Structure probing data (2A3 and DMS) for a 177-nucleotide construct. Reactivities are rounded to 0.1 and cut off at 0 and 3. DMS adducts were read by reverse transcription with MarathonRT.
RNA sequence: GGGAACGACUCGAGUAGAGUCGAAAACGUUCAGGCGGCAGCAGCAAAUGCUGCCCGACGACGCGACCUCGCGCCAGGACUACGAGGCCGCGGCCGCGUCGCUCGACGUGCAGCGCGCGAGCCUCGAGGGGCCUGAUAUGUUCGCAUAUCAGGCCCCAAAAGAAACAACAACAACAAC
Reactivity to 2A3 in 0.01 (KOAc 150mM, MgCl2 10mM, bicine 150mM(pH8.5), 24C), signal-to-noise 1, nucleotides 027 to 126: c000g030u090u070c010a040g000g040c070g020g060c060a010g000c040a030g000c070a120a050a230u070g000c000u010g010c020c000c010g000a010c010g000a020c020g000c010g050a210c010c020u110c030g020c040g010c070c030a090g000g060a080c080u100a060c130g010a000g000g000c000c000g050c000g000g000c020c010g000c000g000u010c010g000c110u110c130g000a000c000g000u040g040c100a050g020c160g030c010g000c000g140a060g020c010c000u010c020g030a040
Reactivity to DMS in 0.01 (KOAc 150mM, MgCl2 10mM, bicine 150mM(pH8.5), 24C), signal-to-noise 1, nucleotides 027 to 126: c060g010u000u010c000a060g040g030c200g020g030c000a020g010c000a040g000c260a150a140a120u010g000c000u000g030c010c010c000g020a070c060g000a060c000g020c000g010a130c060c120u000c020g000c070g000c060c040a130g000g000a100c130u010a060c020g030a020g000g000c000c000g020c110g000g000c000c020g010c000g020u020c030g010c130u000c200g010a050c000g040u010g010c130a070g010c000g000c010g030c000g000a190g000c010c000u010c030g010a110
Overview:
Conditions: 150 mM KOAc, 10 mM MgCl2 and 150 mM bicine (pH 8.5), 24 C. 2A3 adducts were read by reverse transcription with SuperScript II with manganese.